Structure probing data (2A3) for a 207-nucleotide construct.
RNA sequence: GGGAACGACUCGAGUAGAGUCGAAAAUCAUGUACGCUGGGAGCCUACCCACCUCCAACCCUAUCAACAGCAACUGAAGCGCGCACGGUUGACAUGAUAGAUCUGGAGAGGGCUCCUGUGCUGAAGCGCGCACGGCAACCGAAAGGUGCGAGAUAAACCUCUCUCUUCUCUUCGGAGAAGAGAGAGGAAAAGAAACAACAACAACAAC
Reactivity to 2A3 in 0.01 (KOAc 150mM, MgCl2 10mM, bicine 150mM(pH8.5), 24C), signal-to-noise 2, nucleotides 027 to 156: u130c040a030u140g090u220a060c010g000c010u000g000g000g010a000g000c000c000u140a230c170c040c000a020c000c000u000c000c000a030a040c030c010c000u000a000u000c030a110a230c090a300g010c000a010a010c010u020g030a290a000g030c040g000c010g000c020a020c010g000g060u000u010g070a160c130a300u260g000a020u000a000g030a030u010c060u140g000g000a000g000a000g010g000g000c000u000c000c000u000g000u010g000c000u040g020a150a030g000c010g000c000g000c000a010c000g040g000c020a040a010c010c000g080a180a060a050g040g010u020g010c110g030a070g060a040u300a090a120a060
The reactions ran in a buffer of 150 mM KOAc, 10 mM MgCl2 and 150 mM bicine (pH 8.5), at 24 C. Source: RMDB library RNAMAK, as collected in RNAgym. For 2A3 the reverse transcriptase was SuperScript II with manganese.